RNA sequence: GGGAACGACUCGAGUAGAGUCGAAAACUGGAGGCUUGGGGCGAUACCACCACUCGUUUGUCUGUUGGCGAUUAGUGUUGUCCCCCCGAGUGGCCAGAAAACUCGAAGUCACUUCGGUGACUUCGAGGCUAGUUGUGAUGUUCGCAUCACAACUAGCAAAAGAAACAACAACAACAAC
Reactivity to 2A3 in 0.01 (KOAc 150mM, MgCl2 10mM, bicine 150mM(pH8.5), 24C), signal-to-noise 3, nucleotides 027 to 126: c000u010g010g020a000g020g080c010u010u000g000g000g000g000c010g000a000u010a000c000c010a000c000c010a010c010u000c010g020u000u060u130g200u110c140u110g220u160u120g050g000c010g010a000u000u060a030g010u000g010u010u000g000u000c050c040c000c000c000c000g000a000g000u050g140g000c000c000a000g020a060a070a010a010c010u010c010g010a000a000g010u010c010a010c010u040u100c240g080g000u000g000a000c000u000u000c000g000a000g000
Reactivity to DMS in 0.01 (KOAc 150mM, MgCl2 10mM, bicine 150mM(pH8.5), 24C), signal-to-noise 1, nucleotides 027 to 126: c020u000g000g000a060g010g010c030u000u000g030g020g000g060c300g000a010u000a010c070c010a000c000c010a020c100u010c010g010u000u020u000g030u000c080u020g010u000u000g000g000c010g010a030u000u000a060g000u000g000u010u000g000u000c010c110c000c000c000c020g010a020g030u010g000g010c000c000a080g010a090a040a080a250c000u000c000g000a010a000g000u000c000a000c000u000u020c180g000g020u000g010a010c010u000u000c000g000a000g000